Background:
This 177-nucleotide RNA was probed chemically with 2A3 and DMS. Conditions: 150 mM KOAc, 10 mM MgCl2 and 150 mM bicine (pH 8.5), 24 C. Source: RMDB library OK2TRN, as collected in RNAgym. For 2A3, 1,313 sequencing reads were counted. The DMS profile rests on 2,806 reads.
RNA sequence: GGGAACGACUCGAGUAGAGUCGAAAAGGUGCAGGUUAUGCUGCAAGCUUGUUAAAUGGAGUUCUAGCUUCUGUUAGCAUGAAUGUGAUCUACUCAGAGAUUUAUGCUUCUUAUGAGGACCUCAAGAACGGAGUUAACAGUUCGCUGUUAACUCCGUAAAAGAAACAACAACAACAAC
Reactivity to 2A3 in 0.01 (KOAc 150mM, MgCl2 10mM, bicine 150mM(pH8.5), 24C), signal-to-noise 1, nucleotides 027 to 126: g040g000u000g030c010a000g000g150u010u220a090u080g080c030u040g030c000a000a030g010c000u050u070g040u150u150a130a190a080u230g100g050a080g060u130u030c040u060a000g010c000u040u040c020u030g070u080u140a030g000c050a030u030g030a080a000u070g070u120g050a030u000c020u060a080c010u000c030a000g010a000g000a070u000u140u110a210u210g050c000u070u000c020u000u110a250u200g000a040g010g010a030c000c080u050c010a000a050g010a050
Reactivity to DMS in 0.01 (KOAc 150mM, MgCl2 10mM, bicine 150mM(pH8.5), 24C), signal-to-noise 3, nucleotides 027 to 126: g000g030u010g000c010a000g010g020u020u020a050u010g000c000u010g020c020a040a050g010c050u000u000g010u000u010a080a100a140u010g010g000a080g000u000u000c090u020a110g010c040u000u010c080u010g010u000u000a020g020c020a030u000g000a100a060u010g010u000g010a070u000c010u010a080c070u000c020a080g000a070g010a070u000u000u000a080u020g010c130u010u000c060u000u000a090u000g010a060g000g000a110c060c020u000c130a060a080g010a120